The record gives the reactivity of an RNA of 170 nucleotides to 2A3 and DMS. For DMS, 15,723 sequencing reads were counted. The reactions ran in a buffer of 150 mM KOAc, 10 mM MgCl2 and 150 mM bicine (pH 8.5), at 24 C. For 2A3, 16,832 sequencing reads were counted. High DMS reactivity at an A or C suggests that its Watson-Crick edge is free. Reactivities are given for positions 27 through 129. It was measured as part of the RMDB library 15KLIB.
[RMDB]
RNA sequence: GGGAACGACUCGAGUAGAGUCGAAAAAGAAUAGAACACCGGGGGGUGAUCCACCAGGAGAAGGAGCGGAGAACCCACCUCCAGAGGACCCCUUCAGCGAACAGAAGGGCUCCUCCUCCUCGGGAGUAGACCUCUUCCUUCGGGAAGAGGAAAAGAAACAACAACAACAAC
Reactivity to 2A3 in 0.01 (KOAc 150mM, MgCl2 10mM, bicine 150mM(pH8.5), 24C), signal-to-noise 5, nucleotides 027 to 129: a020g090a040a050u170a040g100a100a010c020a030c030c010g010g000g000g000g000g010u040g020a020u000c000c030a080c020c040a050g050g030a050g030a080a050g040g010a010g030c080g020g050a040g010a060a030c000c000c000a030c000c000u020c010c010a010g010a000g000g000a000c010c010c010c000u010u000c030a080g050c050g120a090a040c030a090g010a010a000g010g000g010c000u000c000c000u000c010c010u000c010c000u010c000g030g020g010a020g000u030a010g020a040
Reactivity to DMS in 0.01 (KOAc 150mM, MgCl2 10mM, bicine 150mM(pH8.5), 24C), signal-to-noise 7, nucleotides 027 to 129: a100g050a140a100u070a060g020a090a040c050a050c010c050g030g020g000g010g020g000u020g010a080u010c030c030a160c210c120a130g020g040a040g030a150a070g000g050a030g030c120g030g010a090g040a070a090c020c000c010a070c060c010u010c020c040a100g020a020g000g000a010c280c020c000c010u040u000c030a090g020c030g040a010a000c070a170g030a000a000g020g010g000c150u050c010c020u020c010c020u010c010c020u030c050g030g050g040a090g020u040a100g020a190